[RMDB]
RNA sequence: GGGAACGACUCGAGUAGAGUCGAAAAAACUGAAAUGAUCCUUGAACGACUUGUUACGGCGUUCACGGAUAUAGAACUGUGAAAUCACCGACAGGUUAACGAAGGUAAAGGCCACCAGCGCGCCGAAGGCGAUCUAUGGUUUCGACCAUAGAUCGCCAAAAGAAACAACAACAACAAC
Reactivity to DMS in 0.01 (KOAc 150mM, MgCl2 10mM, bicine 150mM(pH8.5), 24C), signal-to-noise 3, nucleotides 027 to 126: a080a050c070u000g000a080a100a060u010g000a060u010c010c000u000u010g020a040a060c090g000a030c000u000u000g010u020u010a110c170g020g010c100g020u000u000c010a000c040g000g030a050u000a070u000a090g000a150a080c050u000g010u010g000a040a050a070u010c090a060c010c010g010a060c090a040g020g010u000u010a070a090c110g000a060a050g020g020u010a040a110a150g000g010c030c030a060c100c040a060g000c080g010c080g020c040c010g010a090a100
Reactivity to 2A3 in 0.01 (KOAc 150mM, MgCl2 10mM, bicine 150mM(pH8.5), 24C), signal-to-noise 2, nucleotides 027 to 126: a000a000c100u100g040a040a090a060u210g020a040u020c010c000u010u010g010a030a040c030g180a140c000u050u100g090u270u300a140c130g000g000c030g020u010u000c010a000c010g000g010a000u030a030u010a080g120a080a040c020u030g000u050g110a090a010a040u100c040a030c060c000g000a020c030a030g000g050u050u040a050a040c130g040a020a010g050g000u090a060a090a040g010g010c020c010a040c020c040a020g040c030g000c030g020c110c000g050a060a020

The data come from the RNA Mapping Database (RMDB), library OK2TRN. The record gives the reactivity of an RNA of 177 nucleotides to DMS and 2A3. Values are in units of 0.01, from 0 to 300, in steps of 10. The RNA was probed in 150 mM KOAc, 10 mM MgCl2 and 150 mM bicine (pH 8.5) at 24 C. DMS adducts were read by reverse transcription with MarathonRT.